This 177-nucleotide RNA was probed chemically with DMS. The reactions ran in a buffer of 150 mM KOAc, 10 mM MgCl2 and 150 mM bicine (pH 8.5), at 24 C. The data come from the RNA Mapping Database (RMDB), libraries RFM100 and RFMREP.
RNA sequence: GGGAACGACUCGAGUAGAGUCGAAAAUGCGGCUUGCUACUUCGAUGUCGGUUCUUUCCAUCCUGGGUGUGCAGCAGCACCCAAGGGUGGGGUUGUUCGCCCAUUAAAGGGGAACGUGAGCUGGGUUAGGGUAAAAUAGGUUCGCCUAUUUUACCCUAAAAGAAACAACAACAACAAC
Reactivity to DMS in 0.01 (KOAc 150mM, MgCl2 10mM, bicine 150mM(pH8.5), 24C), signal-to-noise 1, nucleotides 027 to 126: u030g010c030g010g000c030u010u020g000c080u000a020c000u000u000c010g010a020u030g030u000c010g000g000u000u000c000u000u010u010c000c000a000u000c000c000u000g020g000g000u010g020u020g000c010a090g000c130a190g020c000a000c000c000c000a010a020g000g020g020u000g000g000g000g010u000u000g000u000u000c130g000c000c000c000a110u010u040a100a100a190g020g000g010g000a040a040c050g000u010g010a090g000c020u020g020g030g010u000u000